[RMDB]
RNA sequence: GGGAACGACUCGAGUAGAGUCGAAAAAGAGAGGAGAUCAAAAAGUAGAGGUGAAAAUUAGCCAGGCGUGAUGGUGCACUUGAACCCGGGAGGCAGAGGUUGCAGUGAGCCAAGAUCACGCCACUGCACUCCAGCCUGGGCAACAAAGCGAGAUUCAACGUAAUCAUUAUUUCGAUAAUGAUUACGUAAAAGAAACAACAACAACAAC
Reactivity to 2A3 in 0.01 (KOAc 150mM, MgCl2 10mM, bicine 150mM(pH8.5), 24C), signal-to-noise 5, nucleotides 027 to 156: a000g070a010g000a010g020g020a030g000a050u080c090a040a080a060a040a020g050u090a040g020a020g000g030u060g050a070a060a070a100u130u070a040g050c020c020a030g010g010c030g030u040g010a050u050g010g010u060g030c020a030c080u040u090g040a030a030c010c000c010g030g020g010a040g030g030c050a020g020a030g070g020u080u080g030c010a010g010u000g030a040g040c040c020a080a020g050a100u060c030a010c060g000c000c000a000c000u000g000c000a010c030u000c010c010a010g010c000c010u010g000g030g000c020a050a050c030a040a100a010g070c050g040a050g020a080u110u130c050a020
Reactivity to DMS in 0.01 (KOAc 150mM, MgCl2 10mM, bicine 150mM(pH8.5), 24C), signal-to-noise 3, nucleotides 027 to 156: a060g000a100g010a050g020g010a070g010a050u000c020a070a050a070a080a120g020u010a060g010a100g040g010u000g010a040a050a030a120u000u010a090g010c030c020a080g030g030c030g030u020g020a080u000g020g020u000g020c040a060c050u000u000g010a060a090c020c000c010g000g020g020a080g040g050c050a080g000a040g000g010u010u000g000c020a050g010u000g000a100g040c030c080a060a100g010a150u000c050a040c030g020c010c000a000c010u000g000c020a050c000u000c010c010a130g010c020c010u000g000g020g010c020a020a060c070a040a050a040g000c030g000a080g000a130u000u000c030a100
Structure probing data (2A3 and DMS) for a 207-nucleotide construct. The RNA was probed in 150 mM KOAc, 10 mM MgCl2 and 150 mM bicine (pH 8.5) at 24 C. DMS adducts were read by reverse transcription with MarathonRT. In probing experiments dimethyl sulfate is read out at A N1 and C N3, which are open when not base-paired. The data come from the RNA Mapping Database (RMDB), library OK3TST.